Source: RMDB library OK2TST, as collected in RNAgym.
Structure probing data (2A3 and DMS) for a 177-nucleotide construct.
For DMS the reverse transcriptase was MarathonRT.
Values cover nucleotides 27 to 126.
For 2A3, 757 sequencing reads were counted.
[RMDB]
RNA sequence: GGGAACGACUCGAGUAGAGUCGAAAAGGAAGUGUCAGAAUAAUGAAGGCUGAGAGUAGGACUAAUCCUGAGUGCCGGACUCAUUUUCAUAGCCAACAUGUCCAAUUUCUCUGUAAUAAGAGGACUCACAACGUUUCAGGUUCGCCUGAAACGUUGUAAAAGAAACAACAACAACAAC
Reactivity to 2A3 in 0.01 (KOAc 150mM, MgCl2 10mM, bicine 150mM(pH8.5), 24C), signal-to-noise 1, nucleotides 027 to 126: g050g030a060a000g070u000g060u090c090a000g010a210a020u130a130a060u070g070a050a010g010g000c040u110g000a040g000a010g200u120a050g060g000a000c020u010a060a050u110c020c000u060g060a090g030u030g220c020c000g030g050a050c010u010c020a060u100u000u040u110c110a090u110a070g000c040c000a060a010c040a040u050g040u000c040c000a070a120u040u030u010c030u040c000u020g080u090a000a090u020a090a020g010a050g030g010a020c010u000c020
Reactivity to DMS in 0.01 (KOAc 150mM, MgCl2 10mM, bicine 150mM(pH8.5), 24C), signal-to-noise 2, nucleotides 027 to 126: g000g010a060a050g010u010g000u000c050a040g010a080a060u010a120a020u000g010a060a150g000g010c070u000g000a100g000a040g010u020a140g040g000a120c080u010a100a120u000c090c060u000g010a090g020u000g000c020c050g000g030a100c030u000c030a090u000u020u000u000c090a040u020a080g000c040c050a020a150c050a040u000g020u000c020c050a050a180u000u010u000c000u000c000u010g010u010a100a090u000a110a060g000a030g000g000a050c220u010c060